[RMDB]
RNA sequence: GGGAACGACUCGAGUAGAGUCGAAAAGAAGAGACCGCCACGAGGAGUCAGGGUUCAGACACGAUCCAAGAGAACACGGUAACACUGACUGUGGAGCGGAAGAGGCAAAGAGAGUGGCGGAAGAGAAGCUCCAGUAAUGCUUCGGCAUUACUGGAGCAAAAGAAACAACAACAACAAC
Reactivity to DMS in 0.01 (KOAc 150mM, MgCl2 10mM, bicine 150mM(pH8.5), 24C), signal-to-noise 1, nucleotides 027 to 126: g000a040a180g000a210g040a210c000c040g030c000c000a000c010g020a170g000g000a050g000u000c080a070g000g030g020u000u000c230a150g000a020c060a070c030g000a200u180c060c040a070a050g000a300g050a180a030c000a020c080g000g000u000a050a040c040a000c100u000g010a070c000u000g000u000g000g000a230g000c060g010g030a050a010g000a160g050g000c060a060a010a060g060a120g000a090g000u000g000g000c000g000g000a040a120g000a040g000a050a070
Reactivity to 2A3 in 0.01 (KOAc 150mM, MgCl2 10mM, bicine 150mM(pH8.5), 24C), signal-to-noise 2, nucleotides 027 to 126: g080a000a050g090a000g030a100c000c000g000c000c000a000c000g060a050g080g020a040g050u010c010a000g020g000g000u030u010c020a020g040a080c040a020c100g030a010u090c030c080a180a020g140a040g000a100a010c070a000c090g010g060u090a000a000c000a000c010u000g020a010c010u050g060u010g080g060a070g020c070g020g000a050a000g020a020g060g030c070a000a130a000g100a020g030a000g010u000g010g000c000g020g020a020a000g030a000g020a160a010